[RMDB]
RNA sequence: GGGAACGACUCGAGUAGAGUCGAAAACGUAAUGUUUACGGGAUGUCUCGUCAAAAAUGGAGUACAUGAUGCCGCCCGCUUUUGACAACGCGUUGCCGGAGUGUGGCCAGAUGAUGACGUUAGAUUCACUAACACAGUGAUUCGUCACUGUGUUAGUAAAAGAAACAACAACAACAAC
Reactivity to DMS in 0.01 (KOAc 150mM, MgCl2 10mM, bicine 150mM(pH8.5), 24C), signal-to-noise 9, nucleotides 027 to 126: c040g020u010a050a080u020g010u000u000u010a070c050g010g010g010a070u010g010u010c020u000c050g020u010c030a020a040a060a090a090u010g000g000a110g010u010a050c050a040u010g000a140u020g000c040c060g010c060c060c010g000c030u000u000u010u020g010a080c130a060a100c130g010c120g000u010u010g030c050c020g000g000a140g020u000g010u010g000g000c020c030a050g010a100u010g000a220u010g000a040c040g010u010u000a040g010a080u010u010c080
Reactivity to 2A3 in 0.01 (KOAc 150mM, MgCl2 10mM, bicine 150mM(pH8.5), 24C), signal-to-noise 9, nucleotides 027 to 126: c030g050u070a060a090u250g040u100u080u080a040c020g020g010g030a020u060g060u040c010u010c040g030u010c020a020a030a030a020a040u080g030g010a060g140u090a040c020a040u100g050a090u110g120c020c010g000c010c010c000g020c020u060u070u060u170g090a060c060a080a030c050g020c020g080u070u070g050c060c010g020g020a040g020u050g000u040g040g020c000c010a030g010a090u070g010a020u060g010a030c020g010u030u040a030g000a110u060u060c020
The record gives the reactivity of an RNA of 177 nucleotides to DMS and 2A3. The data come from the RNA Mapping Database (RMDB), libraries RFM100 and RFMREP. The reactions ran in a buffer of 150 mM KOAc, 10 mM MgCl2 and 150 mM bicine (pH 8.5), at 24 C. Reactivities are given for positions 27 through 126.